[RMDB]
Chemical mapping of a 177-nucleotide RNA with 2A3. 2A3 is a SHAPE reagent: it acylates the 2'-hydroxyl of flexible nucleotides of all four kinds.
RNA sequence: GGGAACGACUCGAGUAGAGUCGAAAAUAGAUACAAGUACUAGAUGAACUAGAAAAUAAAUAAAUACAAAAGCAACGUCUCGAAACUAGUUUAUCUAGUACAAACGAGAGGUUGCAAAAAUAAAAUAGGAUCCUAUAUAGUUCGCUAUAUAGGAUCCAAAAGAAACAACAACAACAAC
Reactivity to 2A3 in 0.01 (KOAc 150mM, MgCl2 10mM, bicine 150mM(pH8.5), 24C), signal-to-noise 2, nucleotides 027 to 126: u090a000g300a050u110a220c070a140a300g000u000a010c000u010a070g050a050u050g000a040a000c000u010a040g100a090a230a000a000u260a010a010a010u150a080a050a010u240a100c040a000a170a020a020g090c020a110a040c130g090u060c010u020c080g120a040a050a040c000u000a000g020u070u000u000a010u020c000u000a000g040u000a010c000a010a010a000c020g000a000g000a010g070g210u000u030g090c140a000a000a000a080a000u230a050a020a040a010u090a030
For 2A3, 911 sequencing reads were counted. The reactions ran in a buffer of 150 mM KOAc, 10 mM MgCl2 and 150 mM bicine (pH 8.5), at 24 C. The data come from the RNA Mapping Database (RMDB), library OK1LIB.